Conditions: 150 mM KOAc, 10 mM MgCl2 and 150 mM bicine (pH 8.5), 24 C.
This 177-nucleotide RNA was probed chemically with DMS and 2A3.
It was measured as part of the RMDB library M2PK50.
For 2A3 the reverse transcriptase was SuperScript II with manganese.
Values are in units of 0.01, from 0 to 300, in steps of 10.
[RMDB]
RNA sequence: GGGAACGACUCGAGUAGAGUCGAAAAUCCUUCCUUUUCGAAGGAAGGACAGUGCACAGUCUUCGCUUCUGUGAAUCACACAACAGCCGUGUCUAUGCGAGGUUUUAAUCAAGUUCGCUUGAUUAAAUUCUGUAUCACUAUUCGUAGUGAUACAGAAAAAAGAAACAACAACAACAAC
Reactivity to DMS in 0.01 (KOAc 150mM, MgCl2 10mM, bicine 150mM(pH8.5), 24C), signal-to-noise 9, nucleotides 027 to 126: u000c000c000u000u000c000c000u000u000u000u010c160g010a020a010g000g010a010a010g000g010a000c090a040g020u000g010c030a030c020a030g010u000c040u000u000c090g010c020u000u000c030u000g010u000g000a100a080u000c150a170c040a040c060a080a080c120a100g000c040c020g010u000g010u010c080u010a060u000g010c040g010a050g010g000u010u000u000u000a010a010u000c000a000a010g010u000u010c210g010c010u000u000g000a020u000u000a010a010a070
Reactivity to 2A3 in 0.01 (KOAc 150mM, MgCl2 10mM, bicine 150mM(pH8.5), 24C), signal-to-noise 7, nucleotides 027 to 126: u010c000c000u010u010c010c000u070u060u030u080c230g130a010a010g000g000a000a000g000g000a000c020a030g060u050g020c010a010c000a030g020u010c050u060u060c070g030c030u040u010c010u030g030u010g070a090a080u120c030a020c000a000c000a120a120c020a060g060c010c020g090u080g040u040c060u100a080u100g030c010g020a030g040g040u030u060u000u030a010a000u000c000a000a000g010u020u050c160g060c060u000u000g000a000u000u010a010a020a020